[RMDB]
The data come from the RNA Mapping Database (RMDB), library OK2TRN. An RNA of 177 nucleotides, treated with 2A3 and DMS and read out base by base. For DMS the reverse transcriptase was MarathonRT.
RNA sequence: GGGAACGACUCGAGUAGAGUCGAAAACAGCAGGUUGCGUGCGCCCAGAUAGGCCGUGCCCGUCGAGGCGAGUGCACCCGCGGUGGCCAAAGCGAUCGUGGAACGCCGUGGCACGCGCAUGCUCACGUACCUCCCCCUAGUUCGCUAGGGGGAGGUAAAAAGAAACAACAACAACAAC
Reactivity to 2A3 in 0.01 (KOAc 150mM, MgCl2 10mM, bicine 150mM(pH8.5), 24C), signal-to-noise 1, nucleotides 027 to 126: c010a000g100c020a020g030g060u270u290g010c000g000u000g000c020g040c010c030c010a020g100a120u180a050g070g000c080c140g070u100g000c030c010c000g040u070c060g050a060g080g000c010g050a060g000u120g030c020a010c030c000c010g000c030g000g000u010g080g030c000c050a140a070a020g040c080g090a060u070c040g030u040g010g010a070a070c040g000c020c010g040u090g040g000c020a000c000g000c000g010c010a000u030g000c000u000c040a070c050g080
Reactivity to DMS in 0.01 (KOAc 150mM, MgCl2 10mM, bicine 150mM(pH8.5), 24C), signal-to-noise 2, nucleotides 027 to 126: c120a070g010c010a030g010g000u010u010g060c000g000u010g000c030g020c030c060c100a180g030a070u010a090g000g010c050c160g010u010g020c010c010c010g040u000c060g000a300g000g000c010g010a070g020u010g020c040a100c080c040c000g030c000g010g000u010g000g030c010c130a070a130a140g000c040g000a020u000c040g020u000g010g020a100a110c070g010c040c010g010u000g010g000c000a000c010g010c060g020c040a030u000g000c010u000c120a070c140g020

Reactivities are given for positions 27 through 126. The RNA was probed in 150 mM KOAc, 10 mM MgCl2 and 150 mM bicine (pH 8.5) at 24 C. For 2A3 the reverse transcriptase was SuperScript II with manganese.